This 207-nucleotide RNA was probed chemically with 2A3 and DMS. DMS adducts were read by reverse transcription with MarathonRT. The RNA was probed in 150 mM KOAc, 10 mM MgCl2 and 150 mM bicine (pH 8.5) at 24 C. For 2A3 the reverse transcriptase was SuperScript II with manganese. Values cover nucleotides 27 to 156.
RNA sequence: GGGAACGACUCGAGUAGAGUCGAAAAGGGUGAUGUCUCCUAACCUUUAUCAAUGGGGGCACUCGGUCGUGCUGUGGGUAGAAAUUUUAUUUCGUGCCUACCUUAAACGCUUGUCGUCGGGAGUAUGUGGGACUGAUGAACUUCGGUUCAUCAGUAAGCCUUAUAAUAACUUCGGUUAUUAUAAGGCAAAAGAAACAACAACAACAAC
Reactivity to 2A3 in 0.01 (KOAc 150mM, MgCl2 10mM, bicine 150mM(pH8.5), 24C), signal-to-noise 6, nucleotides 027 to 156: g050g020g020u060g020a070u030g020u030c020u020c030c000u040a080a100c020c020u120u240u140a210u160c120a110a110u190g000g000g000g000g000c000a020c030u020c010g040g000u020c030g030u030g050c060u070g000u030g020g000g000u020a030g090a010a040a010u170u200u130u150a150u100u130u060c030g030u080g020c000c000u000a010c010c000u080u130a090a110a010c020g040c050u080u120g070u100c040g000u000c010g000g020g020a060g040u080a060u120g050u130g020g000g020a000c010u000g000a000u000g000a000a000c000u030u040c100g060g000u000u000c000a000u000c000a000g000u010a000a010
Reactivity to DMS in 0.01 (KOAc 150mM, MgCl2 10mM, bicine 150mM(pH8.5), 24C), signal-to-noise 2, nucleotides 027 to 156: g000g010g000u010g020a080u010g040u000c010u000c000c000u010a110a100c050c050u010u010u000a100u010c110a140a110u000g020g040g030g040g040c020a030c070u010c040g010g000u010c060g020u010g010c010u000g000u010g020g000g020u000a260g010a030a010a070u000u020u010u010a050u010u010u000c010g010u000g000c010c010u000a050c030c110u010u000a070a100a090c080g010c060u000u000g010u000c010g030u000c010g000g010g000a110g010u000a040u010g030u010g010g010g000a070c000u000g020a030u010g000a020a020c000u000u010c300g020g010u000u000c010a000u000c010a030g020u000a030a180